Chemical mapping of a 177-nucleotide RNA with 2A3 and DMS.

RNA sequence: GGGAACGACUCGAGUAGAGUCGAAAAAAGAGCUGGAAGGCAUGAGGAGGUCGCUGAAGGAGCAAGCCAUCAAAAUCACCAACCUGACCCAGCAGCUGGAGCAGGCAUCCAUUGUUAAGAAGAGGAGACUGUGUAACCGAUUCGUCGGUUACACAGUAAAAGAAACAACAACAACAAC
Reactivity to 2A3 in 0.01 (KOAc 150mM, MgCl2 10mM, bicine 150mM(pH8.5), 24C), signal-to-noise 1, nucleotides 027 to 126: a000a010g100a030g050c060u050g050g000a060a000g070g000c020a040u120g000a020g020g030a010g030g000u070c000g010c030u050g030a090a020g070g020a010g020c040a070a000g010c030c010a060u060c040a040a110a010a070u080c030a030c070c000a030a050c000c030u030g090a130c000c000c020a020g030c030a000g040c040u050g010g010a050g010c020a010g020g010c020a040u040c050c030a050u000u100g050u100u120a130a150g060a050a010g020a090g100g000a030g030
Reactivity to DMS in 0.01 (KOAc 150mM, MgCl2 10mM, bicine 150mM(pH8.5), 24C), signal-to-noise 2, nucleotides 027 to 126: a050a040g000a110g020c020u000g000g020a080a080g020g010c060a040u000g030a100g010g020a100g010g000u000c160g020c070u010g030a100a060g010g000a030g010c110a060a130g000c020c040a070u000c070a050a050a060a110u010c040a080c050c040a040a100c080c030u000g010a070c040c030c000a050g000c120a070g020c040u010g000g000a060g030c020a040g000g000c070a050u000c060c040a060u010u000g000u030u000a070a040g000a090a090g000a090g000g020a120g010

Reactivities are rounded to 0.1 and cut off at 0 and 3. The reactions ran in a buffer of 150 mM KOAc, 10 mM MgCl2 and 150 mM bicine (pH 8.5), at 24 C. Source: RMDB library OK2TRN, as collected in RNAgym. The 2A3 profile rests on 1,309 reads. High DMS reactivity at an A or C suggests that its Watson-Crick edge is free.